RNA sequence: GGGAACGACUCGAGUAGAGUCGAAAACCCCUUCAGUUCGCUGAAGGGGAAAGGGUUCUCCGGCCCGCCGUGAACCCAGGCUAAAAGUUAAGGUAGGUGGGCAAACCCUACUCUUCGGAGUAGGGAAGACCGUAUUUGUCUUCGGACAAAUACGGUCAAAAGAAACAACAACAACAAC
Reactivity to 2A3 in 0.01 (KOAc 150mM, MgCl2 10mM, bicine 150mM(pH8.5), 24C), signal-to-noise 2, nucleotides 027 to 126: c010c000c000c000u000u010c010a070g000u030u160c170g010c120u000g000a000a010g030g010g000g040a000a070a110g000g000g000u010u030c010u020c010c010g090g010c000c000c010g020c000c010g010u010g000a000a010c010c000c020a000g050g000c050u130a170a080a000a060g070u260u110a120a000g170g080u090a020g000g020u060g020g000g010c000a000a000a000c000c000c010u000a000c000u020c010u000u040c220g100g000a010g000u000a000g000g020g000a010a000